[RMDB]
RNA sequence: GGGAACGACUCGAGUAGAGUCGAAAAGUAAAUUUUGUGGUUUUUCACCGUUUAACAAAAUCGGAGCCCAUAAGAGGAUAACAGCUAAAGGGAAUGGAUAGUAUGCUUCAGUUCUUCUACUUCUUCUAAGAUAAAGAGAUUUCGAUCUCUUUAUCUUAAAAGAAACAACAACAACAAC
Reactivity to DMS in 0.01 (KOAc 150mM, MgCl2 10mM, bicine 150mM(pH8.5), 24C), signal-to-noise 3, nucleotides 027 to 126: g000u010a070a070a080u020u000u000u000g020u010g010g000u000u000u010u010u030c160a070c030c010g030u020u020u020a180a070c070a030a030a080a040u010c040g010g010a190g000c020c010c010a080u020a070a090g000a050g000g000a090u000a030a090c100a060g000c040u010a050a060a090g010g010g020a070a050u010g010g000a090u010a040g020u010a060u010g010c040u010u010c070a090g020u010u010c010u000u000c070u010a080c100u010u000c000u010u000c050u000
Reactivity to 2A3 in 0.01 (KOAc 150mM, MgCl2 10mM, bicine 150mM(pH8.5), 24C), signal-to-noise 8, nucleotides 027 to 126: g040u050a010a090a090u050u040u060u040g060u080g040g060u020u030u010u130u180c070a040c030c020g030u040u090u140a120a050c060a020a100a000a000u070c040g080g020a030g020c010c010c000a050u120a090a040g030a010g020g020a020u040a100a060c040a040g010c040u080a080a070a070g060g020g040a060a050u090g030g040a040u040a080g060u070a040u110g020c000u020u040c030a060g000u040u000c000u040u000c010u040a090c050u030u000c000u000u000c000u000
This 177-nucleotide RNA was probed chemically with DMS and 2A3. For DMS the reverse transcriptase was MarathonRT. Source: RMDB libraries RFM100 and RFMREP, as collected in RNAgym. For 2A3 the reverse transcriptase was SuperScript II with manganese. The RNA was probed in 150 mM KOAc, 10 mM MgCl2 and 150 mM bicine (pH 8.5) at 24 C.